The data come from the RNA Mapping Database (RMDB), library M2PK50. Chemical mapping of a 177-nucleotide RNA with 2A3 and DMS. The reactions ran in a buffer of 150 mM KOAc, 10 mM MgCl2 and 150 mM bicine (pH 8.5), at 24 C.
RNA sequence: GGGAACGACUCGAGUAGAGUCGAAAAGACUACGGGUUCGCCCGUAGUCACUUACCGAGAAUGCGACUCGGUAUAUAACGCAAACCCUUGGUAACAAGGGAAUCACCAGUUCCUUCGGGAACUGGAAGAAAGAUAUGGGUUUCGACCCAUAUCUUUCAAAAGAAACAACAACAACAAC
Reactivity to 2A3 in 0.01 (KOAc 150mM, MgCl2 10mM, bicine 150mM(pH8.5), 24C), signal-to-noise 3, nucleotides 027 to 126: g000a000c000u000a010c000g020g000g020u020u050c180g080c040c000c000g010u000a000g000u010c000a000c000u010u050a030c010c000g000a000g040a110a100u130g040c050g130a110c040u010c000g000g010u010a000u000a000u000a010a020c020g000c030a030a040a300c000c000c010u010u010g030g000u110a120a050c000a010a010g010g000g030a000a020u060c020a010c020c000a000g010u000u000c010c000u040u070c160g070g000g010a000a000c000u000g000g000a000a040
Reactivity to DMS in 0.01 (KOAc 150mM, MgCl2 10mM, bicine 150mM(pH8.5), 24C), signal-to-noise 4, nucleotides 027 to 126: g010a010c010u000a000c000g010g010g000u000u010c250g020c000c000c000g000u000a010g010u000c000a020c120u000u000a220c000c000g000a010g000a120a110u010g040c100g020a120c000u000c000g000g040u010a020u010a050u000a060a070c090g020c060a060a170a240c020c000c000u000u000g000g000u010a130a170c000a000a010g000g000g000a030a020u010c180a190c000c000a030g000u000u000c000c000u000u000c180g030g010g000a010a000c000u000g000g000a040a040